[RMDB]
About this RNA: The record gives the reactivity of an RNA of 177 nucleotides to DMS. The DMS profile rests on 1,721 reads. High DMS reactivity at an A or C suggests that its Watson-Crick edge is free. The reactions ran in a buffer of 150 mM KOAc, 10 mM MgCl2 and 150 mM bicine (pH 8.5), at 24 C. The data come from the RNA Mapping Database (RMDB), library TTRINS. Values cover nucleotides 27 to 126.
RNA sequence: GGGAACGACUCGAGUAGAGUCGAAAAGAUAUGGAGUACUAGGCCACGUCCCUCCAGGCGAAGAACUACUGGGUCGGAAACGACCUGUAGGGAGCCUUAAGGGACGUGGCCUAGUACUCCUAAGUCAUCCUAUUCUUCUGUUCGCAGAAGAAUAGGAAAAAGAAACAACAACAACAAC
Reactivity to DMS in 0.01 (KOAc 150mM, MgCl2 10mM, bicine 150mM(pH8.5), 24C), signal-to-noise 2, nucleotides 027 to 126: g030a050u000a300u010g000g000a020g030u000a000c030u000a010g000g020c000c000a010c000g000u000c000c000c010u010c090c300a040g000g020c010g010a120a220g010a210a170c000u000a010c000u010g050g000g020u010c000g010g010a080a110a170c030g000a020c000c000u000g010u000a000g020g000g000a110g020c000c000u000u000a130a020g000g000g000a000c000g040u000g000g020c010c010u000a010g020u000a000c010u000c010c010u000a000a050g000u000c030a160